[RMDB]
RNA sequence: GGGAACGACUCGAGUAGAGUCGAAAACCAUUCCUUAUACCUUGAGUAUUGCUGAAUUCAGUUUAGCGUGCAUCCUCUUGGCUAUUCUCAUAGUGAUUGUCAAAUUUGGAGUUACUUAUUCGUCAAUAAAACACUACCACGUUCGCGUGGUAGUGAAGACUAAUAGAGCGUUCGCGCUCUAUUAGUCAAAAGAAACAACAACAACAAC
Reactivity to DMS in 0.01 (KOAc 150mM, MgCl2 10mM, bicine 150mM(pH8.5), 24C), signal-to-noise 3, nucleotides 027 to 156: c020c030a280u010u000c010c010u010u010a180u020a040c030c030u000u000g000a110g000u000a030u000u010g010c050u000g010a040a060u000u000c150a160g040u010u010u000a050g030c050g050u000g000c100a180u000c110c010u000c020u000u000g030g020c040u000a100u000u000c020u000c070a060u000a120g020u000g000a090u000u000g000u000c030a050a060a180u000u000u000g020g000a170g000u000u000a080c070u010u000a130u010u000c090g020u000c060a030a090u000a060a050a070a170c010a010c000u000a000c010c010a030c000g000u000u010c260g020c040g070u000g010g020u000a000g000u010g010a050a060
Reactivity to 2A3 in 0.01 (KOAc 150mM, MgCl2 10mM, bicine 150mM(pH8.5), 24C), signal-to-noise 5, nucleotides 027 to 156: c020c010a040u090u070c020c010u160u120a060u040a100c000c030u070u100g060a030g070u040a090u140u120g000c010u020g020a120a060u120u150c060a100g070u030u040u100a050g010c060g050u050g040c020a090u030c000c000u010c010u020u010g010g000c010u030a030u130u040c070u020c040a130u120a090g080u060g080a090u050u090g040u060c050a040a080a110u190u120u090g030g000a050g040u100u040a070c030u100u090a100u150u110c070g100u030c070a110a100u120a100a090a010a010c000a000c000u000a000c000c010a010c010g010u020u040c090g010c000g090u000g000g010u000a000g000u000g010a000a000